About this RNA:
The record gives the reactivity of an RNA of 207 nucleotides to 2A3 and DMS. For DMS the reverse transcriptase was MarathonRT. It was measured as part of the RMDB library M2RFPK. The RNA was probed in 150 mM KOAc, 10 mM MgCl2 and 150 mM bicine (pH 8.5) at 24 C.
RNA sequence: GGGAACGACUCGAGUAGAGUCGAAAAAGAAUUGUACCACCACUGCGUAUCCUAAACGAGCUCUGCAGUGGUUAUUCUUGUAAAGUACUAGGAGUGAAUAGUGGCCCGUAUUGCAGGCAUUAACAUUAAAAGGCAAUCCACUUCGGUGGAUUGCCAACCUUUAAACACUGUUCGCAGUGUUUAAAGGAAAAGAAACAACAACAACAAC
Reactivity to 2A3 in 0.01 (KOAc 150mM, MgCl2 10mM, bicine 150mM(pH8.5), 24C), signal-to-noise 2, nucleotides 027 to 156: a010g040a040a060u150u070g080u140a070c040c040a000c000c000a000c020u000g000c000g040u070a130u160c020c060u150a120a090a040c090g040a050g010c020u080c120u230g000c010a010g010u020g010g000u000u000a000u000u010c000u020u020g050u080a080a080a060g010u010a020c010u040a040g100g000a050g060u130g030a080a130u050a040g040u040g030g070c020c010c010g040u070a130u070u160g060c050a060g000g000c000a010u110u160a090a010c010a050u110u150a080a100a000a030g020g000c000a000a000u000c020c000a000c000u010u030c130g040g000u000g000g000a000u000u000g010c000c000a000a000
Reactivity to DMS in 0.01 (KOAc 150mM, MgCl2 10mM, bicine 150mM(pH8.5), 24C), signal-to-noise 2, nucleotides 027 to 156: a040g000a010a070u000u010g030u000a070c040c090a100c000c010a040c000u000g010c000g040u020a110u010c010c020u000a050a140a160c060g010a070g020c100u000c080u020g060c010a020g030u000g010g010u010u000a010u010u000c010u000u000g010u000a080a100a150g020u000a060c050u000a080g030g000a110g000u010g000a060a120u000a070g010u000g010g040c010c000c010g000u000a060u000u000g000c050a070g010g050c060a050u000u000a030a100c070a070u000u010a030a060a100a160g000g020c010a020a020u010c000c000a000c010u000u000c260g080g010u010g000g010a010u000u020g020c010c000a000a000